An RNA of 177 nucleotides, treated with 2A3 and DMS and read out base by base. It was measured as part of the RMDB library OK2TST. For 2A3 the reverse transcriptase was SuperScript II with manganese. Conditions: 150 mM KOAc, 10 mM MgCl2 and 150 mM bicine (pH 8.5), 24 C.

RNA sequence: GGGAACGACUCGAGUAGAGUCGAAAACGCCGUACCAUCAUUGACAGUCACGCGCUAUUGGUACAUCAAUGCACGCUUUAACCGUCUGAGGUAUAACCGAGUUGUCGAGGCUACAGAACGUGCUGAAGACCAUCACUGCUUUCGAGCAGUGAUGGUCAAAAGAAACAACAACAACAAC
Reactivity to 2A3 in 0.01 (KOAc 150mM, MgCl2 10mM, bicine 150mM(pH8.5), 24C), signal-to-noise 1, nucleotides 027 to 126: c050g070c010c030g000u050a020c030c030a160u100c010a000u060u120g080a060c060a030g090u100c060a010c200g020c010g050c050u040a010u110u080g000g000u080a070c000a050u060c040a000a080u110g010c040a030c040g020c040u070u100u070a090a010c030c030g040u040c050u050g090a060g000g020u030a120u000a100a000c010c040g060a010g090u100u150g150u090c080g070a060g050g000c040u080a050c010a050g080a050a050c040g100u050g000c010u020g030a090a070
Reactivity to DMS in 0.01 (KOAc 150mM, MgCl2 10mM, bicine 150mM(pH8.5), 24C), signal-to-noise 2, nucleotides 027 to 126: c070g000c060c110g000u020a060c020c020a080u020c100a090u010u000g010a100c060a070g020u000c140a070c120g000c150g020c040u000a030u010u000g020g010u000a030c150a070u000c060a060a060u000g000c050a030c000g020c120u000u000u000a040a060c010c000g010u000c030u000g000a040g000g000u000a030u020a060a140c050c050g000a100g000u000u010g010u000c000g010a140g000g000c050u030a080c090a120g000a060a040c110g000u000g060c000u000g010a090a120